RNA sequence: GGGAACGACUCGAGUAGAGUCGAAAACGAACUGUCUGAAGCUAUUACUGGAUGUUACGUCACAAGUAGACCGGAUUGCAACCAAUACCAUCUGACGCGUAGUUUGCAAAAGAACAAAACCUACUACAACAAUUUGGUUUUUUUGGACACUAAACAAUAGGCCAGGUGCGUUCGCGCACCUGGCCUAAAAAGAAACAACAACAACAAC
Reactivity to 2A3 in 0.01 (KOAc 150mM, MgCl2 10mM, bicine 150mM(pH8.5), 24C), signal-to-noise 2, nucleotides 027 to 156: c030g030a000a030c060u060g030u010c010u040g040a030a010g020c030u040a070u090u090a140c050u070g030g030a020u070g050u170u090a020c050g020u050c090a030c000a120a050g110u030a030g020a030c030c020g020g060a010u000u060g030c030a040a090c050c020a010a090u070a130c010c010a030u080c010u040g020a100c090g000c010g080u030a000g000u000u050u010g000c000a000a000a000a140g050a080a000c030a060a060a050a020c000c010u000a020c030u000a020c030a120a020c000a070a120u060u020u090g020g000u030u000u020u030u010u010u030g060g020a040c060a030c130u120a040a140a070c070a070a040

An RNA of 207 nucleotides, treated with 2A3 and read out base by base. 2A3 adducts were read by reverse transcription with SuperScript II with manganese. The RNA was probed in 150 mM KOAc, 10 mM MgCl2 and 150 mM bicine (pH 8.5) at 24 C.